[RMDB]
An RNA of 207 nucleotides, treated with 2A3 and DMS and read out base by base. For DMS, 1,348 sequencing reads were counted. For 2A3, 1,658 sequencing reads were counted. High DMS reactivity at an A or C suggests that its Watson-Crick edge is free. 2A3 is a SHAPE reagent: it acylates the 2'-hydroxyl of flexible nucleotides of all four kinds.
RNA sequence: GGGAACGACUCGAGUAGAGUCGAAAACUGCUCCUGAAUGACUACUGAGUAAAUAACAAAAAGAAGGCAGAAAUAAAUACAUUAUUUGAGACCAAUGAGAAUAAAGAUACAACAUACCAGAAUCUCUGGGACACAGCUAAAACAGUGUUUAGGGGAAGGUAUCACUAGGAUUCGUCCUAGUGAUACCAAAAGAAACAACAACAACAAC
Reactivity to 2A3 in 0.01 (KOAc 150mM, MgCl2 10mM, bicine 150mM(pH8.5), 24C), signal-to-noise 3, nucleotides 027 to 156: c020u030g040c010u010c020c010u040g090a130a070u050g020a050c040u070a020c040u100g050a020g100u110a080a190a140u220a130a040c070a000a100a040a030a010g060a050a050g020g010c030a030g110a100a040a010u180a030a030a010u150a060c050a040u030u130a090u130u180u040g030a040g000a020c020c050a080a100u120g030a040g050a070a050u100a110a140a020g030a010u050a130c030a050a020c030a120u120a060c040c010a010g060a220a160u040c100u010c000u090g000g000g030a000c020a000c000a020g060c050u100a130a040a070a000c040a030g000u030g040u060u060u080a030g000g010g010g010a020a050
Reactivity to DMS in 0.01 (KOAc 150mM, MgCl2 10mM, bicine 150mM(pH8.5), 24C), signal-to-noise 1, nucleotides 027 to 156: c000u000g000c000u000c060c020u000g030a170a080u000g030a050c000u000a270c020u030g020a190g000u000a050a090a130u000a130a160c020a020a070a090a140a070g000a070a130g120g040c050a300g020a000a090a060u000a020a010a170u010a040c060a140u000u000a040u000u000u000g000a130g060a280c020c010a090a170u000g000a130g000a110a050u000a010a220a130g000a080u030a080c140a010a050c030a300u000a050c010c000a080g000a170a090u000c020u030c000u000g010g000g020a050c000a010c020a140g000c070u000a110a000a000a040c050a050g010u000g000u000u000u000a100g000g000g000g000a090a120